Background: Chemical mapping of a 177-nucleotide RNA with DMS and 2A3. For DMS, 8,363 sequencing reads were counted. The RNA was probed in 150 mM KOAc, 10 mM MgCl2 and 150 mM bicine (pH 8.5) at 24 C. DMS adducts were read by reverse transcription with MarathonRT.
RNA sequence: GGGAACGACUCGAGUAGAGUCGAAAAGAUAUGGACUCCAUAUGGAGCUCUGUGUCGGAAACGACACUGAGCUAUGAAGUAUGCGAGUCCUAAGUCAAACUGCCUGACACGUUCGCGUGUCAGGCAGGCAUAUAGAUGGCUUCGGCCAUCUAUAUGCAAAAGAAACAACAACAACAAC
Reactivity to DMS in 0.01 (KOAc 150mM, MgCl2 10mM, bicine 150mM(pH8.5), 24C), signal-to-noise 5, nucleotides 027 to 126: g010a020u000a170u000g000g000a010c000u000c000c000a010u000a000u010g010g020a060g030c000u010c000u000g010u010g010u000c000g010g000a030a030a070c000g000a020c000a000c000u000g000a020g030c000u000a170u010g000a160a260g010u000a010u000g000c230g010a020g010u000c000c010u000a000a060g000u000c020a090a120a300c010u000g010c010c010u000g000a000c000a010c000g020u000u010c250g020c000g010u000g010u000c010a000g000g010c000a000g000
Reactivity to 2A3 in 0.01 (KOAc 150mM, MgCl2 10mM, bicine 150mM(pH8.5), 24C), signal-to-noise 5, nucleotides 027 to 126: g010a000u020a020u050g000g000a000c000u010c010c010a000u010a010u040g180g040a080g010c010u000c000u010g010u010g000u010c000g000g000a010a010a000c010g010a000c000a000c030u030g000a000g000c000u140a300u240g040a010a000g000u000a000u020g110c270g030a000g000u000c000c000u000a000a000g000u000c010a020a070a150c000u010g000c000c010u000g010a010c020a000c010g080u110u120c300g030c010g140u010g010u010c010a000g000g010c010a000g000